This 177-nucleotide RNA was probed chemically with DMS and 2A3. The reactions ran in a buffer of 150 mM KOAc, 10 mM MgCl2 and 150 mM bicine (pH 8.5), at 24 C. 2A3 adducts were read by reverse transcription with SuperScript II with manganese.
RNA sequence: GGGAACGACUCGAGUAGAGUCGAAAACCCUCUGGGCCCAGAGGAAAGUGGAGUUGGGCAAUGCCACCUGCUGCACUGUCCAGUUUAAAAAGGAAGUCGAGGCUCGAAGGACCUGCUGUCCACCGCGCUGCCAUGUCCUAUUCGUAGGACAUGGCAGAAAAGAAACAACAACAACAAC
Reactivity to DMS in 0.01 (KOAc 150mM, MgCl2 10mM, bicine 150mM(pH8.5), 24C), signal-to-noise 2, nucleotides 027 to 126: c020c000c000u020c040u000g010g030g000c050c040c090a210g010a130g020g000a030a060a070g010u010g020g020a040g020u000u010g010g010g000c010a050a070u010g010c120c070a130c070c040u010g000c050u000g000c060a040c040u000g000u000c030c030a050g010u000u010u010a030a100a070a120a080g010g000a080a080g020u000c080g010a110g030g000c030u000c040g020a120a060g010g020a060c030c090u000g000c050u010g020u000c040c010a110c130c060g020c150g020
Reactivity to 2A3 in 0.01 (KOAc 150mM, MgCl2 10mM, bicine 150mM(pH8.5), 24C), signal-to-noise 1, nucleotides 027 to 126: c010c000c000u040c030u010g020g030g000c010c020c020a010g030a020g070g090a050a040a000g070u100g040g110a020g010u040u110g030g020g000c040a060a040u140g000c040c010a100c010c070u020g010c010u030g040c040a000c020u030g010u000c000c010a030g000u040u090u220a120a160a010a010a010g100g010a040a050g010u020c060g060a040g030g000c000u030c050g020a080a040g000g000a040c000c050u080g060c100u070g060u000c000c020a060c000c030g000c000g010